RNA sequence: GGGAACGACUCGAGUAGAGUCGAAAAAUGAACAUGGUGGCGCAAGGACGAGGAAAGUCCGGACUCCACAGAGCACGGUGAUUGUUAACAACAACCCGGGGUGACCCGCGGGCAAGUGCAACAGAAAUGGAAGAAUGGCUUUCGAGCCAUUCUUCCAAAAAGAAACAACAACAACAAC
Reactivity to DMS in 0.01 (KOAc 150mM, MgCl2 10mM, bicine 150mM(pH8.5), 24C), signal-to-noise 1, nucleotides 027 to 126: a140u000g000a080a200c170a160u020g020g080u000g000g020c100g000c040a200a050g000g000a000c000g000a170g070g060a000a050a020g010u050c000c000g000g000a140c010u000c000c000a000c070a230g000a100g070c010a000c000g000g040u000g070a220u000u000g020u000u000a170a140c150a110a050c060a010a070c000c000c020g000g000g000g040u000g050a290c010c000c000g020c120g000g000g000c000a000a180g000u000g100c060a100a100c080a040g000a080a110a060